[RMDB]
RNA sequence: GGGAACGACUCGAGUAGAGUCGAAAAAAUGCAUGUCACACAUGGGGAUAGUAUUUUCCAUCCUGGCUACAAGCCCCUUCCUUGUACUUUCAAUAGUGAAGAAGAAGAUAUAUGUGUCUACGGUGAUCCCCUAGAGCUGGAGCAGCCGAAAACUGGCUACAGGGAUCAUAUUCGUAUGAUCCCUGUAAAAAGAAACAACAACAACAAC
Reactivity to DMS in 0.01 (KOAc 150mM, MgCl2 10mM, bicine 150mM(pH8.5), 24C), signal-to-noise 1, nucleotides 027 to 156: a140a010u000g010c030a090u000g020u000c110a100c040a130c060a070u000g020g000g010g010a070u000a050g010u000a190u000u000u010u000c020c020a050u000c030c030u000g000g010c020u000a100c060a110a180g010c060c030c050c050u000u000c040c010u000u030g020u020a020c040u000u020u010c100a060a150u000a080g020u000g010a060a200g000a040a080g000a050a040g000a060u000a060u000a040u000g000u000g020u000c010u000a050c090g010g000u000g000a100u000c010c000c000c040u000a150g030a100g030c040u000g030g030a110g020c020a060g020c000c010g020a060a060a030a050c020u000g030g030c040
Reactivity to 2A3 in 0.01 (KOAc 150mM, MgCl2 10mM, bicine 150mM(pH8.5), 24C), signal-to-noise 2, nucleotides 027 to 156: a000a000u110g000c030a030u080g020u100c010a030c000a000c000a120u070g060g000g030g010a030u060a120g160u100a200u020u070u010u060c000c000a030u010c000c010u030g000g000c020u070a060c050a140a000g010c000c000c000c020u000u060c020c000u000u050g080u080a100c000u090u090u100c110a110a150u110a170g040u080g010a040a010g030a050a010g000a030a020g060a100u050a020u060a020u180g040u010g010u060c060u030a020c010g080g000u030g010a050u000c020c000c000c010u080a040g020a010g090c080u060g030g100a020g040c020a030g050c040c010g040a060a140a010a020c070u050g000g100c000